[RMDB]
RNA sequence: GGGAACGACUCGAGUAGAGUCGAAAAUUCAGGGAAGAUUCAUGGUUUAUCCUAUUCCUAAUGGUGGUGGCAAGAUAGAGGCAUCCCCUCAAAGGCUAGGAGUAAUACCUCAAAGCAGCAGAGCUGUCCAUAAUUAUCCAUUAUCCAUUAUUCCCUCCCUUUAGUUCGAAUUCGUUCGAACUAAAGGAAAAGAAACAACAACAACAAC
Reactivity to 2A3 in 0.01 (KOAc 150mM, MgCl2 10mM, bicine 150mM(pH8.5), 24C), signal-to-noise 6, nucleotides 027 to 156: u080u040c040a030g030g000g020a020a040g060a090u120u100c090a100u160g050g060u100u130u150a080u110c010c010u040a090u060u110c010c010u050a070a070u070g030g010u010g010g020u020g010g030c020a040a080g060a200u190a060g050a100g040g000c020a050u070c030c030c000c010u030c040a130a150a000g070g000c050u050a020g000g060a020g030u110a100a070u070a190c000c010u030c010a070a090a000g010c010a010g020c030a020g020a010g120c020u030g040u060c010c020a040u080a190a060u170u110a030u070c020c010a000u020u040a030u080c020c010a020u040u070a040u100u040c010c000c000u030c010
Reactivity to DMS in 0.01 (KOAc 150mM, MgCl2 10mM, bicine 150mM(pH8.5), 24C), signal-to-noise 3, nucleotides 027 to 156: u010u000c050a170g000g030g010a080a080g010a110u000u000c080a060u010g040g000u010u000u010a070u020c020c040u000a150u000u000c020c020u000a090a110u000g000g060u020g010g040u000g010g010c110a060a170g020a180u010a140g010a090g060g030c020a120u000c010c020c000c000u010c040a070a120a110g020g010c240u000a060g010g000a060g000u000a050a080u010a050c030c000u020c010a040a070a110g000c000a050g020c050a150g020a120g020c010u000g000u000c030c050a100u010a040a050u000u000a120u000c020c020a070u010u000a050u010c020c010a090u000u000a190u000u000c010c000c040u000c020